[RMDB]
RNA sequence: GGGAACGACUCGAGUAGAGUCGAAAAAGCGGACCAUCAUUAGCAGCUAUUAUGGCAGCAGCCAUUGGUGUGGCCAUACUCUCUACAGCAGAUUCUUUGAUUAGUGCUGUUGCUCAGCUUAUUAGUGGCCUCAAAGACAGUUCGCUGUCUUUGAGGCAAAAGAAACAACAACAACAAC
Reactivity to DMS in 0.01 (KOAc 150mM, MgCl2 10mM, bicine 150mM(pH8.5), 24C), signal-to-noise 2, nucleotides 027 to 126: a090g030c050g030g010a120c010c030a040u010c060a050u000u010a050g000c020a090g020c050u000a110u000u010a050u000g010g010c030a090g040c050a080g010c030c020a070u000u010g010g050u000g010u000g000g020c040c070a070u000a080c110u000c070u000c050u020a060c080a020g000c070a040g030a100u000u000c040u000u020u030g000a160u000u010a070g020u000g000c000u010g010u000u000g040c090u010c100a050g010c050u000u000a060u000u000a060g000u000g040
Reactivity to 2A3 in 0.01 (KOAc 150mM, MgCl2 10mM, bicine 150mM(pH8.5), 24C), signal-to-noise 2, nucleotides 027 to 126: a000g070c000g000g020a020c040c010a010u030c000a010u020u080a030g050c070a010g000c030u100a090u200u120a100u280g020g000c000a020g000c010a000g040c040c000a040u000u070g060g030u080g020u010g070g000c020c000a030u060a100c010u060c000u000c050u060a020c010a030g000c020a030g000a150u140u000c090u140u150u100g080a120u000u180a040g020u020g040c000u010g000u020u010g000c020u040c050a040g000c000u040u110a060u090u080a220g060u040g130